[RMDB]
An RNA of 207 nucleotides, treated with 2A3 and read out base by base. 2A3 adducts were read by reverse transcription with SuperScript II with manganese. The reactions ran in a buffer of 150 mM KOAc, 10 mM MgCl2 and 150 mM bicine (pH 8.5), at 24 C. The 2A3 profile rests on 599 reads. Source: RMDB library M2RFPK, as collected in RNAgym.
RNA sequence: GGGAACGACUCGAGUAGAGUCGAAAACCUGGUUUAGGGUUCCACGCUAGCCCUAUCUAUCGGUCGAGAUGCGAGCGCUUAAGCUCAAAUUGAGUGGCUGAGUUAGUGGUGAACGUAUCCCUAUGUUAAAACGGUAGCUGCUUCGGCAGCUACCGAACCAAACUAUCCACUUCGGUGGAUAGUUUGGAAAAGAAACAACAACAACAAC
Reactivity to 2A3 in 0.01 (KOAc 150mM, MgCl2 10mM, bicine 150mM(pH8.5), 24C), signal-to-noise 1, nucleotides 027 to 156: c020c010u080g000g000u110u050u030a020g070g000g000u080u070c120c000a000c000g000c010u010a020g000c040c050c000u020a020u080c020u060a140u060c000g010g050u000c010g010a000g000a100u000g010c020g000a000g020c030g060c160u260u290a120a050g000c000u060c000a000a050a000u010u020g010a050g040u260g010g000c000u000g020a000g010u000u010a110g000u180g190g000u010g000a060a010c000g000u000a020u050c010c000c000u000a000u070g070u070u200a070a090a020a040c020g020g000u000a000g020c000u000g030c000u070u050c200g080g050c010a000g000c000u020a000c000c000g000a000a000